Chemical mapping of a 170-nucleotide RNA with 2A3 and DMS. For DMS, 6,426 sequencing reads were counted. 2A3 adducts were read by reverse transcription with SuperScript II with manganese. It was measured as part of the RMDB library 15KLIB. High 2A3 reactivity points to a flexible backbone, as in loops and unpaired stretches. Reactivities are rounded to 0.1 and cut off at 0 and 3.

RNA sequence: GGGAACGACUCGAGUAGAGUCGAAAAAAGUUGCAAAAUAAUGAGAUCAAACCUUCAGGUCUAAAAACCAUGGUUGUGUCUGCGGGUCAAGAGCAAACUAACUGUAAUACUAGUUCCUUAGCUUAUUAGAUACGCUCGUUCGCGAGCGUAAAAAGAAACAACAACAACAAC
Reactivity to 2A3 in 0.01 (KOAc 150mM, MgCl2 10mM, bicine 150mM(pH8.5), 24C), signal-to-noise 1, nucleotides 027 to 129: a000a000g080u040u010g030c000a010a010a010a010u090a000a040u050g060a000g000a080u070c000a050a050a050c000c000u050u070c010a000g080g000u000c040u080a230a000a000a000a000c000c040a010u100g050g050u000u010g040u010g000u000c000u060g030c040g060g000g000u120c030a050a020g020a000g140c000a050a020a000c000u070a080a000c060u110g110u150a000a000u060a060c090u000a000g060u000u000c000c000u080u010a080g000c030u000u010a160u070u010a160g000a010
Reactivity to DMS in 0.01 (KOAc 150mM, MgCl2 10mM, bicine 150mM(pH8.5), 24C), signal-to-noise 2, nucleotides 027 to 129: a080a140g000u050u000g000c070a040a090a160a020u000a000a000u070g050a060g050a090u050c120a050a070a070c040c010u010u010c230a060g050g010u010c120u020a020a060a030a010a030c050c010a060u050g020g020u050u000g070u040g000u040c050u020g000c070g020g020g040u040c070a030a030g030a060g030c060a070a060a030c100u000a000a000c070u040g020u010a010a020u040a090c150u020a020g000u000u000c150c030u000u010a100g010c060u000u050a090u020u070a000g000a060